Background: Chemical mapping of a 177-nucleotide RNA with 2A3 and DMS. It was measured as part of the RMDB library OK1LIB.
RNA sequence: GGGAACGACUCGAGUAGAGUCGAAAAGAGUACCAGGUUCAGCUGGACAUCGCGAUGCAGUCCGGUAAGCCGAAAGAAAUCGCAGAGAAAAUGGUUGAAGGCCGCAUGAAGAAAUUCACCGGCGAAGCCUCGUACGGGUAUUCGUACCCGUACGAGGAAAAGAAACAACAACAACAAC
Reactivity to 2A3 in 0.01 (KOAc 150mM, MgCl2 10mM, bicine 150mM(pH8.5), 24C), signal-to-noise 6, nucleotides 027 to 126: g080a000g010u090a070c030c050a050g000g030u060u090c100a070g000c020u000g000g000a010c000a110u190c120g010c040g030a020u180g040c030a020g040u040c030c020g000g010u050a100a030g030c040c040g060a080a100a040g110a030a100a010u120c060g020c110a040g050a000g070a130a110a060a160u200g050g010u020u060g040a130a040g110g000c010c010g020c030a040u130g000a020a020g020a010a050a000u050u050c030a010c020c020g010g020c030g000a050a030g020
Reactivity to DMS in 0.01 (KOAc 150mM, MgCl2 10mM, bicine 150mM(pH8.5), 24C), signal-to-noise 4, nucleotides 027 to 126: g010a160g020u010a150c030c000a090g000g010u020u000c040a150g000c020u000g020g020a080c010a130u010c070g030c030g020a100u010g000c160a190g000u000c010c000g010g010u010a130a120g000c000c030g000a070a110a040g000a060a150a060u020c050g000c030a140g010a140g020a070a040a040a090u030g000g000u010u000g000a140a130g000g000c010c000g030c250a100u000g000a020a020g000a050a100a160u020u010c010a040c300c000g000g010c010g000a110a130g000
The 2A3 profile rests on 3,867 reads.